[RMDB]
RNA sequence: GGGAACGACUCGAGUAGAGUCGAAAACGCGCGAACGUAAAUUAUAUUGCGCGAAGCACGUGCGGAAAGGGCCCGAAACGCACGUGCGGGCCCCGAAAUAACGCGCAAUAUAAUUUACGGAAGCGCGGCGGUUAUAUAAGUUCGCUUAUAUAACCGCAAAAGAAACAACAACAACAAC
Reactivity to 2A3 in 0.01 (KOAc 150mM, MgCl2 10mM, bicine 150mM(pH8.5), 24C), signal-to-noise 9, nucleotides 027 to 126: c010g020c000g000c000g070a200a010c000g020u000a000a000a000u000u000a000u000a000u000u000g000c010g000c000g010a030a000g000c000a000c010g010u030g000c010g010g030a190a110a100g120g040g030c010c010c000g020a050a050a000c010g000c000a000c010g000u000g000c000g000g030g000c000c000c000c010g120a150a070a070u190a090a040c010g000c000g000c000a000a000u000a000u000a000a000u000u000u000a000c000g000g000a010a000g000c000g000c000g000
Reactivity to DMS in 0.01 (KOAc 150mM, MgCl2 10mM, bicine 150mM(pH8.5), 24C), signal-to-noise 3, nucleotides 027 to 126: c000g010c010g020c000g020a170a200c000g010u000a000a000a000u000u000a000u000a000u000u000g000c020g010c010g000a110a090g030c010a020c010g020u000g000c000g000g000a070a120a130g010g000g000c010c040c020g000a070a090a160c010g010c000a000c000g020u020g010c000g030g000g000c040c000c020c020g010a090a140a100u030a080a120c030g010c000g000c000a010a000u000a010u010a000a000u000u000u000a000c000g000g010a050a240g000c000g020c000g000